Notes:
Chemical mapping of a 177-nucleotide RNA with 2A3 and DMS. Values cover nucleotides 27 to 126. For 2A3, 6,770 sequencing reads were counted. The RNA was probed in 150 mM KOAc, 10 mM MgCl2 and 150 mM bicine (pH 8.5) at 24 C. As a SHAPE reagent, 2A3 marks flexible, mostly unpaired nucleotides at the ribose 2'-OH. For DMS, 2,815 sequencing reads were counted. It was measured as part of the RMDB library TTRDES.

[RMDB]
RNA sequence: GGGAACGACUCGAGUAGAGUCGAAAAGAUAUGGAUCCCAUAGAUGCUCAACAGCUAGCUCGGAAACGAGCUAGACAUGAGCGCUAUGUGGAUCCUAAGUCAAAACAUGAGUGUUCGCACUCAUGAACAGUCUAUGCUUGUUCGCAAGCAUAGACUGAAAAGAAACAACAACAACAAC
Reactivity to 2A3 in 0.01 (KOAc 150mM, MgCl2 10mM, bicine 150mM(pH8.5), 24C), signal-to-noise 3, nucleotides 027 to 126: g040a010u080a050u140g020g000a030u000c050c000c010a000u010a000g210a150u150g010c010u010c030a080a150c040a190g020c010u000a000g000c000u000c010g030g060a050a130a120c000g010a000g010c000u000a000g020a000c010a070u090g020a000g000c010g000c000u000a000u030g120u300g030g000a010u000c000c000u000a020a010g000u000c030a050a000a070a120c010a000u010g000a000g010u030g060u170u230c300g080c080a000c000u000c010a000u000g000a030a020
Reactivity to DMS in 0.01 (KOAc 150mM, MgCl2 10mM, bicine 150mM(pH8.5), 24C), signal-to-noise 3, nucleotides 027 to 126: g020a030u010a300u010g020g000a030u000c000c000c000a000u000a010g000a070u000g010c020u000c000a040a140c300a190g000c000u000a000g010c000u000c000g020g000a110a070a260c000g020a000g020c000u000a000g000a030c080a150u020g010a030g040c000g010c010u010a000u000g050u070g000g010a020u000c000c000u000a000a070g010u010c040a060a080a130a200c010a010u000g000a040g000u000g020u000u010c250g010c020a000c010u000c000a000u000g000a090a190